[RMDB]
RNA sequence: GGGAACGACUCGAGUAGAGUCGAAAAUUGUGACUGAUCCUGAUGAGAUUUAUGGAUCCCUGAACAUGAAAGCUGCUGUCGGUGCUCAAUACAAAGGAAAGAAACAGGAUUACUUUUCUGGCAUGGAGUCAUAUCGCCAAUUCGUUGGCGAUAUGACAAAAGAAACAACAACAACAAC
Reactivity to 2A3 in 0.01 (KOAc 150mM, MgCl2 10mM, bicine 150mM(pH8.5), 24C), signal-to-noise 1, nucleotides 027 to 126: u060u030g050u060g050a020c040u050g000a050u000c000c000u040g000a080u110g060a080g010a110u040u060u170a090u170g040g000a020u010c020c000c000u040g040a050a000c020a050u100g100a120a000a000g000c020u040g000c030u030g070u050c010g000g000u000g010c010u000c050a040a090u100a140c070a110a110a050g020g000a030a090a000g050a010a040a010c020a040g000g010a090u080u060a110c010u000u080u010u000c000u020g030g000c020a030u020g010g030a010
Reactivity to DMS in 0.01 (KOAc 150mM, MgCl2 10mM, bicine 150mM(pH8.5), 24C), signal-to-noise 2, nucleotides 027 to 126: u010u000g000u010g020a120c140u000g010a060u010c010c010u000g000a160u010g010a150g000a150u000u010u000a090u000g040g010a070u000c020c010c010u010g000a090a060c060a070u010g020a050a120a140g000c050u010g000c030u000g010u000c030g030g010u010g020c020u000c030a070a060u010a060c210a100a120a080g000g000a040a010a040g010a070a070a130c070a020g000g000a270u000u000a150c040u000u000u000u000c020u000g000g030c070a040u000g000g000a230
Structure probing data (2A3 and DMS) for a 177-nucleotide construct. The reactions ran in a buffer of 150 mM KOAc, 10 mM MgCl2 and 150 mM bicine (pH 8.5), at 24 C.